[RMDB]
RNA sequence: GGGAACGACUCGAGUAGAGUCGAAAACUGGCUUCUCUGCUGCCUCGCCAAAGCAAUGAGCUUGCUUGCAGACUUCGUUUUCGAAGAGAUACCACAAGACAUGGUGCAAGAGUGUCAUCGAGGUACACGUAGGCAUCUUUUUCGAAAGAUGCCUACGAAAAGAAACAACAACAACAAC
Reactivity to DMS in 0.01 (KOAc 150mM, MgCl2 10mM, bicine 150mM(pH8.5), 24C), signal-to-noise 2, nucleotides 027 to 126: c090u010g000g000c060u000u000c010u010c050u000g010c050u000g000c050c010u000c010g040c060c180a000a030a130g000c050a090a080u010g000a250g020c080u010u000g000c030u000u000g010c090a160g000a130c010u010u000c020g030u000u000u000u000c050g010a040a030g020a160g000a110u010a130c030c020a050c140a090a100g000a100c090a130u010g000g030u000g040c110a030a060g000a100g020u000g010u000c050a090u000c050g020a040g000g070u020a030c120a160
Reactivity to 2A3 in 0.01 (KOAc 150mM, MgCl2 10mM, bicine 150mM(pH8.5), 24C), signal-to-noise 2, nucleotides 027 to 126: c030u000g080g040c030u090u070c060u020c040u050g090c020u030g000c050c000u020c040g010c030c020a100a020a010g060c000a010a160u160g000a060g030c010u030u030g040c010u000u000g000c070a050g020a160c010u020u000c020g060u000u180u080u260c040g010a030a010g030a010g010a040u140a100c030c000a040c070a090a030g050a050c040a150u090g000g000u060g080c010a020a030g030a030g070u050g090u060c010a030u120c020g020a030g080g030u030a020c120a000